[RMDB]
RNA sequence: GGGAACGACUCGAGUAGAGUCGAAAAAUUUAUGUACUAAGGUAAAUAGAGUAUUAGAGAAGUACGGCUCGAGAAUAGAUUGUGAAAAUGCAGAAAUGUCGGUAGAAAUGGCGGAAAGACUUGUUAGUGACUAUUAGAACUUCGGUUCUAAUAGUCAAAAAGAAACAACAACAACAAC
Reactivity to 2A3 in 0.01 (KOAc 150mM, MgCl2 10mM, bicine 150mM(pH8.5), 24C), signal-to-noise 2, nucleotides 027 to 126: a000u090u080u050a180u120g060u000a020c030u080a130a000g140g030u060a090a050a060u160a110g050a020g000u040a100u150u050a040g100a040g000a060a030g030u010a020c020g000g000c000u010c040g000a000g000a010a040u110a010g140a040u080u080g000u030g050a020a070a120a070u150g030c080a020g070a040a140a030u110g000u050c030g050g060u040a000g070a090a060a030u190g080g020c000g010g060a070a010a000g020a030c020u010u090g030u080u020a140g050
Reactivity to DMS in 0.01 (KOAc 150mM, MgCl2 10mM, bicine 150mM(pH8.5), 24C), signal-to-noise 5, nucleotides 027 to 126: a080u010u020u010a030u020g010u010a060c050u000a030a070g000g000u010a060a060a090u040a070g010a060g010u010a060u020u010a060g000a070g010a040a060g010u010a050c060g010g000c040u000c020g010a120g020a100a080u010a060g000a110u010u020g010u000g000a060a070a040a060u010g000c050a040g000a040a060a070u020g020u010c040g000g010u020a020g000a040a050a080u030g000g030c040g000g010a020a090a060g000a060c110u020u010g010u000u000a090g020